[RMDB]
RNA sequence: GGGAACGACUCGAGUAGAGUCGAAAAGUGGCUCUUGGGCGAAAGUACUGACGACAGACCAGAAGCGGGAAGCCGUGAUGUUGAUAUGUGAUGCGACCGGUCUGUCGCAACGUCGUGCCUGCAGGCUCGUCAACUUGCGUUUCGACGCAAGUUGACGAAAAGAAACAACAACAACAAC
Reactivity to 2A3 in 0.01 (KOAc 150mM, MgCl2 10mM, bicine 150mM(pH8.5), 24C), signal-to-noise 2, nucleotides 027 to 126: g040u110g030g000c040u000c000u140u050g050g030g020c090g020a040a090a040g030u060a070c020u020g090a040c070g000a000c030a010g000a000c000c000a000g010a170a000g010c020g040g000g000a000a000g050c010c010g010u040g100a250u040g000u060u030g060a050u010a080u240g220u100g080a150u280g010c000g000a000c020c000g000g000u030c000u020g000u000c000g000c050a010a010c000g020u020c040g000u050g070c000c000u010g000c040a000g040g000c000u000
The record gives the reactivity of an RNA of 177 nucleotides to 2A3. The reactions ran in a buffer of 150 mM KOAc, 10 mM MgCl2 and 150 mM bicine (pH 8.5), at 24 C.